[RMDB]
RNA sequence: GGGAACGACUCGAGUAGAGUCGAAAACGCGCGCUGCGACGAGAUGCGCUUUCCGGGCUGCUUCCACAGGCGCCAGCCCAUUCAACCGUGCGGCAAGAUAAGCGCCGUUGAAGCUGUCGCCAGCGCACGGUGAAAAUAUGUUCGCAUAUUUUCACCGAAAAGAAACAACAACAACAAC
Reactivity to 2A3 in 0.01 (KOAc 150mM, MgCl2 10mM, bicine 150mM(pH8.5), 24C), signal-to-noise 7, nucleotides 027 to 126: c050g050c010g000c000g000c030u030g020c010g030a030c020g030a040g030a200u160g040c060g000c000u010u050u010c030c000g010g060g000c010u040g000c010u050u020c020c040a050c030a190g030g000c010g000c010c010a010g000c000c020c000a010u150u170c080a070a090c060c040g030u040g020c100g050g000c050a080a070g080a270u200a170a070g010c000g010c000c010g000u010u030g010a010a010g000c030u030g000u000c000g020c090c060a000g000c000g000c020a010
Reactivity to DMS in 0.01 (KOAc 150mM, MgCl2 10mM, bicine 150mM(pH8.5), 24C), signal-to-noise 8, nucleotides 027 to 126: c130g020c100g030c010g030c010u000g010c010g010a060c030g010a140g000a130u010g010c030g020c020u000u000u010c100c090g010g000g020c030u000g000c020u000u000c030c090a070c080a130g030g010c020g010c050c060a160g010c010c020c010a090u010u010c080a100a110c200c180g010u000g010c150g010g010c030a130a100g010a140u000a090a150g010c010g000c000c040g000u000u000g000a030a060g010c050u000g010u000c010g010c100c070a040g000c010g020c030a110

The data come from the RNA Mapping Database (RMDB), library OK2TST. The record gives the reactivity of an RNA of 177 nucleotides to 2A3 and DMS. The 2A3 profile rests on 22,077 reads. For DMS, 11,367 sequencing reads were counted. Conditions: 150 mM KOAc, 10 mM MgCl2 and 150 mM bicine (pH 8.5), 24 C. High DMS reactivity at an A or C suggests that its Watson-Crick edge is free.